[RMDB]
RNA sequence: GGGAACGACUCGAGUAGAGUCGAAAAUUUACGGGCCCGGGAGGAGGACCGAAUACACGCGCGCGAGGUCCUCCAGGUAGUACGAACGGGCGCGUGAAUAAUAGUACUACCACCCGGGCCCACCGAAGAGAUAAUGCUAUUUCGAUAGCAUUAUCUCAAAAGAAACAACAACAACAAC
Reactivity to 2A3 in 0.01 (KOAc 150mM, MgCl2 10mM, bicine 150mM(pH8.5), 24C), signal-to-noise 2, nucleotides 027 to 126: u050u040u090a070c020g000g000g020c000c030c040g020g000g000a070g000g020a000g000g000a000c000c050g060a050a060u160a050c090a000c040g050c000g000c000g010c050g080a060g020g000u000c000c000u000c000c010a000g000g000u010a010g000u010a000c040g020a140a020c080g080g060g000c000g010c000g010u030g040a000a010u180a070a020u070a050g000u000a010c000u010a010c000c010a020c010c010c000g010g000g000c010c000c010a000c000c000g010a040a010
Reactivity to DMS in 0.01 (KOAc 150mM, MgCl2 10mM, bicine 150mM(pH8.5), 24C), signal-to-noise 3, nucleotides 027 to 126: u000u000u010a160c080g000g010g020c020c010c000g000g010g050a300g030g000a030g010g010a020c000c000g000a130a120u000a100c120a040c020g010c000g020c010g010c100g010a120g010g010u010c010c000u000c020c020a030g010g010u000a010g000u000a010c010g020a110a140c190g000g000g000c000g000c010g000u000g000a090a110u010a050a130u000a160g010u000a010c000u000a020c000c010a300c020c020c000g010g000g000c020c000c000a000c000c010g000a130a110